The record gives the reactivity of an RNA of 207 nucleotides to 2A3. The RNA was probed in 150 mM KOAc, 10 mM MgCl2 and 150 mM bicine (pH 8.5) at 24 C.

RNA sequence: GGGAACGACUCGAGUAGAGUCGAAAACAUUACGAAUUCAGUCGCAAAUUGUAAAAUUAGCUACUCUACGAUUUAGUGAGCGUUAGUAACGUUGUAAUAUAAUAUAGUCUUUGGAAGGAUUAUAUUGGAGCCGCGGACAAGUUCGCUUGUCCGCGAAGACAUGAUUUGGGUUCGCCCAAAUCAUGUCAAAAGAAACAACAACAACAAC
Reactivity to 2A3 in 0.01 (KOAc 150mM, MgCl2 10mM, bicine 150mM(pH8.5), 24C), signal-to-noise 1, nucleotides 027 to 156: c000a000u050u100a030c010g040a000a040u090u240c050a090g140u060c070g010c100a020a070a070u020u060g040u060a100a110a050a070u210u070a070g040c020u040a030c030u000c010u050a020c000g020a020u110u080u110a070g070u110g110a030g070c020g000u030u040a040g040u050a120a060c070g000u000u000g020u020a160a100u060a120u010a130a020u000a000u000a050g000u020c030u030u030u050g150g010a070a090g000g000a000u010u010a000u000a000u000u000g030g030a100g080c090c020g000c000g010g000a000c000a000a000g060u090u100c150g030c130u000u000g000u000c090c000g000c020g000a000a000